[RMDB]
RNA sequence: GGGAACGACUCGAGUAGAGUCGAAAAGCGUGGAGAGAGGGCCAGCGGUGCUCUGGAAUACAGGCUCUGCUUUGGACCACAAUCUUUCGUCCCUUCUUCUUUACCUUCUACUGGCUCUUCCGAUGAGACGCGACCGGUGGCAUCACCUCUCGGUUCGGCUACAUUACUAGUUCGCUAGUAAUGUAGCAAAAGAAACAACAACAACAAC
Reactivity to DMS in 0.01 (KOAc 150mM, MgCl2 10mM, bicine 150mM(pH8.5), 24C), signal-to-noise 1, nucleotides 027 to 156: g010c050g010u010g040g000a080g000a120g030a070g000g000g040c000c030a100g020c020g000g010u010g010c020u010c050u000g010g000a210a140u010a240c070a110g030g000c050u010c000u000g020c060u010u000u000g030g000a130c020c020a150c140a080a240u010c040u010u000u000c030g020u010c010c040c020u000u000c040u000u010c050u000u010u000a140c030c000u000u000c040u020a080c080u020g030g000c030u030c020u000u020c050c060g040a210u000g010a170g040a110c040g000c080g030a110c020c000g040g010u000g040g040c080a110u000c030a090c030c010u000c040u000c010g010g020u000u000c040g000
Reactivity to 2A3 in 0.01 (KOAc 150mM, MgCl2 10mM, bicine 150mM(pH8.5), 24C), signal-to-noise 5, nucleotides 027 to 156: g060c070g030u080g020g020a010g010a000g020a040g020g010g010c010c020a020g010c010g020g010u020g020c050u030c010u270g050g090a190a070u300a220c000a010g000g020c000u000c020u030g000c000u130u140u130g050g030a110c030c020a080c050a090a080u070c050u030u130u100c060g070u070c010c000c010u060u050c040u090u010c000u010u120u070a080c020c020u040u030c030u080a110c040u050g040g000c000u010c000u090u020c020c020g090a130u090g030a030g030a040c040g020c050g070a020c000c020g010g020u010g000g020c040a080u100c020a080c030c000u000c020u030c010g010g010u070u070c040g050
Structure probing data (DMS and 2A3) for a 207-nucleotide construct.
The DMS profile rests on 2,604 reads.
The reactions ran in a buffer of 150 mM KOAc, 10 mM MgCl2 and 150 mM bicine (pH 8.5), at 24 C.
The data come from the RNA Mapping Database (RMDB), library VIROID.
For DMS the reverse transcriptase was MarathonRT.